[RMDB]
RNA sequence: GGGAACGACUCGAGUAGAGUCGAAAAGGGCUUCUUUGAGGUGAGCCUUAGUGCCCAUCCCCAUUUGGUGGCGCCGGAUACCAAGGGUGUGUGAAAGGGGUGGGUAGGGAAUAUGGGUCUCACCUGCCAAUCUGCUUAUAAUAACACUUGUCCACAAAGUGCUAGUGGUAUUCGUACCACUAGCACUAAAAGAAACAACAACAACAAC
Reactivity to 2A3 in 0.01 (KOAc 150mM, MgCl2 10mM, bicine 150mM(pH8.5), 24C), signal-to-noise 1, nucleotides 027 to 156: g070g000g030c020u100u010c050u150u260u150g010a030g050g000u000g060a040g000c000c090u010u040a040g000u010g000c000c010c010a070u000c000c010c000c000a120u070u060u050g050g000u010g000g000c110g000c040c040g030g060a040u100a020c060c000a030a000g020g080g000u130g010u010g020u010g100a090a060a160g050g030g030g100u180g020g000g050u050a070g050g140g170a090a000u040a080u100g000g000g130u070c000u000c000a000c000c010u000g080c000c000a010a080u070c010u070g030c000u000u150a260u100a300a000u170a070a020c080a010c260u090u030g020u010c050c000a040c050a020a080
An RNA of 207 nucleotides, treated with 2A3 and read out base by base. It was measured as part of the RMDB library OK3TST. The 2A3 profile rests on 430 reads.